[RMDB]
RNA sequence: GGGAACGACUCGAGUAGAGUCGAAAAAAUUUUUGUUUGAGACUGUGGCUGCGCAUUUCACAAGUUAUUCAAUAACACUGAAUGACAAAAAGAGUUAUUGUUCUGAGUCAGAAGUGGAGUUCAUCUCUAUCCCGGGGAGAUUCGUCUCCCCGGGAUAAAAAGAAACAACAACAACAAC
Reactivity to DMS in 0.01 (KOAc 150mM, MgCl2 10mM, bicine 150mM(pH8.5), 24C), signal-to-noise 1, nucleotides 027 to 126: a030a020u000u000u020u000u010g060u000u000u000g040a150g040a130c190u000g020u000g000g000c000u010g000c060g070c050a050u000u000u000c020a000c030a100a070g000u010u000a070u000u020c010a070a020u000a130a070c100a300c120u000g030a020a020u000g000a060c000a060a020a000a040a050g000a030g000u020u000a060u000u000g000u000u000c050u010g010a250g000u020c000a040g000a130a020g020u000g020g020a060g000u010u020c010a140u000c020u000c010
Reactivity to 2A3 in 0.01 (KOAc 150mM, MgCl2 10mM, bicine 150mM(pH8.5), 24C), signal-to-noise 1, nucleotides 027 to 126: a000a000u140u020u000u010u000g190u030u010u080g040a010g000a080c130u040g000u000g000g000c000u010g000c130g000c140a060u020u010u040c000a030c010a020a010g110u010u060a000u080u010c020a010a130u070a040a010c000a000c050u010g070a100a080u050g070a000c040a000a100a000a000a000g080a000g000u090u040a060u150u300g050u250u000c050u020g020a020g080u020c040a030g010a080a000g020u030g000g000a050g000u010u070c050a030u010c000u030c000